Conditions: 150 mM KOAc, 10 mM MgCl2 and 150 mM bicine (pH 8.5), 24 C. This 207-nucleotide RNA was probed chemically with 2A3. 2A3 adducts were read by reverse transcription with SuperScript II with manganese. It was measured as part of the RMDB library OK3TST. The 2A3 profile rests on 550 reads.
[RMDB]
RNA sequence: GGGAACGACUCGAGUAGAGUCGAAAAAAACUACUUCUUCAACGUUUCGGAUAUCGACUUCAUAGAGUACGUCUUCCUGACGCACCUGAAUCCUUCUCGCGUGUCCGUGGACGAGCGCACGGUGGAACUGAUCUUCGACAAGCUCUACGAGAAGCUCACAGUGUGUUACCUUCGGGUAACACACUGUAAAAGAAACAACAACAACAAC
Reactivity to 2A3 in 0.01 (KOAc 150mM, MgCl2 10mM, bicine 150mM(pH8.5), 24C), signal-to-noise 1, nucleotides 027 to 156: a000a000a000c110u160a040c020u110u130c010u140u080c070a190a170c090g040u090u110u080c050g060g030a110u000a040u130c010g060a060c020u070u000c070a060u110a080g010a010g050u080a100c010g000u020c110u030u000c000c060u090g010a030c010g030c010a030c010c040u050g080a060a040u150c000c020u070u060c050u050c050g060c010g020u030g060u020c010c000g040u030g150g000a120c070g030a020g000c110g070c000a000c050g040g040u000g070g020a100a040c070u110g030a080u070c020u070u010c000g020a020c000a090a000g020c020u000c040u020a020c010g020a040g040a080a070g010c040u020c000